[RMDB]
RNA sequence: GGGAACGACUCGAGUAGAGUCGAAAACUAGGAACACUGGGGUCCAGUGGAUCCGUGGGACUACCCUCUCCACCCUCCCAACACACUCCUUCCCCCCUGCGGGGCUUCCCCAUAAGAUGGCAGGAACACGGCGGAUUGUUCGCAAUCCGCAAAAGAAACAACAACAACAAC
Reactivity to DMS in 0.01 (KOAc 150mM, MgCl2 10mM, bicine 150mM(pH8.5), 24C), signal-to-noise 4, nucleotides 027 to 129: c120u040a140g050g000a040a120c010a030c030u000g000g020g040g050u050c040c000a070g040u050g100g000a050u040c000c000g000u040g000g000g000a130c020u030a150c000c070c010u050c030u010c030c010a140c060c040c070u020c030c000c010a150a100c230a120c140a080c070u020c020c000u030u000c010c000c000c020c040c020u000g020c000g050g010g000g060c140u000u000c010c000c030c040a050u050a080a040g010a120u040g010g070c050a050g020g030a060a090c110a080c030g000
Reactivity to 2A3 in 0.01 (KOAc 150mM, MgCl2 10mM, bicine 150mM(pH8.5), 24C), signal-to-noise 4, nucleotides 027 to 129: c040u050a100g010g040a020a020c030a000c050u020g020g000g050g110u080c050c000a030g030u040g060g030a110u020c020c040g010u130g000g010g030a000c040u090a100c040c000c000u030c010u020c010c020a040c030c010c000u010c020c010c000a090a010c080a000c000a010c020u060c020c000u020u090c000c010c000c000c010c000u040g000c040g000g000g010g000c000u030u010c000c000c040c000a050u070a110a060g050a050u090g050g000c030a020g000g030a020a020c090a010c050g060